[RMDB]
RNA sequence: GGGAACGACUCGAGUAGAGUCGAAAACAGAUAGUCAAAGGGAAGAGGCCAUAGCUGACCAGCGGGAAGGGGCUGCAGGUAAUCAGAGGGCAGGGGCCCCAGCUGACCAGGGGGCAGAGGCUGCAGACUAACUACCCUAGUUCGCUAGGGUAGUUAGAAAAGAAACAACAACAACAAC
Reactivity to DMS in 0.01 (KOAc 150mM, MgCl2 10mM, bicine 150mM(pH8.5), 24C), signal-to-noise 4, nucleotides 027 to 126: c060a100g010a100u010a060g020u010c040a070a060a120g000g010g000a070a080g000a110g010g010c030c030a080u000a100g010c060u010g000a100c060c040a080g020c100g020g000g020a130a070g000g010g020g020c030u000g010c060a030g020g010u010a060a100u010c110a080g010a100g000g000g000c090a070g000g010g010g020c010c000c000c010a050g000c040u010g010a030c050c060a110g000g000g000g000g020c060a060g000a050g010g020c020u010g000c040a060g020a270
Reactivity to 2A3 in 0.01 (KOAc 150mM, MgCl2 10mM, bicine 150mM(pH8.5), 24C), signal-to-noise 2, nucleotides 027 to 126: c030a020g120a170u170a030g040u100c070a070a090a070g030g010g030a090a050g050a060g090g000c040c020a080u100a050g040c040u030g060a100c030c050a000g010c040g040g020g030a080a060g010g010g010g000c010u000g000c010a020g000g060u100a080a050u130c010a030g030a110g090g040g010c050a060g040g000g060g000c010c010c000c000a020g020c030u040g010a040c010c030a050g000g010g020g000g050c010a020g000a010g060g000c000u000g000c020a010g000a030